[RMDB]
RNA sequence: GGGAACGACUCGAGUAGAGUCGAAAAGUCGGCGGUGCCGCAUCGAUGCCGGGCGCGGCCUCCGUCUCCAGCCAGCGCAAAACCUCGUCCUCGACGACGGCGCGCUGCACCCACACCCCGCUUGUGCAGAUGGUCGUACCCGACUUGUACUGGCUGGGAAUGUCCUUCUGUUCGCAGAAGGACAUUCAAAAGAAACAACAACAACAAC
Reactivity to 2A3 in 0.01 (KOAc 150mM, MgCl2 10mM, bicine 150mM(pH8.5), 24C), signal-to-noise 1, nucleotides 027 to 156: g160u150c080g000g000c000g000g020u020g000c010c010g020c000a010u050c030g240a140u180g160c140c030g060g010g000c100g000c020g000g030c000c060u090c020c000g000u000c020u030c000c010a020g050c000c000a030g010c020g020c020a040a030a080a150c020c000u030c040g000u020c040c120u170c160g050a060c000g010a010c070g020g000c010g030c020g010c020u000g010c000a000c000c070c000a120c010a090c010c030c000c000g030c040u100u030g000u000g040c000a010g010a300u090g140g000u010c050g030u090a170c000c000c000g020a000c020u030u010g000u000a000c000u000g000g000c000u010g000g010